[RMDB]
RNA sequence: GGGAACGACUCGAGUAGAGUCGAAAACAGGUAAGUACACAAUUCUCUAAGCGAUGAGAAGCGUGUGGAAAAUUAGGGAUGGGCUACGGCUAUAAUCCUAAGAAAGCUUAUCUACAAGCGGAGGUAUAAAAGCUCGCAGCGUUCGCGCUGCGAGCAAGCUCACUACUAAGUUCGCUUAGUAGUGAGCAAAAGAAACAACAACAACAAC
Reactivity to 2A3 in 0.01 (KOAc 150mM, MgCl2 10mM, bicine 150mM(pH8.5), 24C), signal-to-noise 1, nucleotides 027 to 156: c030a000g030g000u000a010a000g160u150a060c000a010c010a040a030u040u000c000u000c030u100a230a130g080c060g170a200u080g010a040g000a070a000g010c040g000u010g000u020g020g000a060a100a070a130u100u110a060g040g010g040a010u060g050g020g000c010u020a020c180g070g000c000u020a070u050a210a040u000c010c010u030a010a040g040a090a080a010g010c020u010u010a010u050c020u040a120c050a060a000g060c080g080g120a040g030g090u090a100u060a210a130a040a010g010c000u000c000g000c020a000g030c040g040u060u100c080g010c010g010c050u000g010c000g080a000g010c000a010a000

Background: This 207-nucleotide RNA was probed chemically with 2A3. The reactions ran in a buffer of 150 mM KOAc, 10 mM MgCl2 and 150 mM bicine (pH 8.5), at 24 C. 2A3 is a SHAPE reagent: it acylates the 2'-hydroxyl of flexible nucleotides of all four kinds. Reactivities are rounded to 0.1 and cut off at 0 and 3.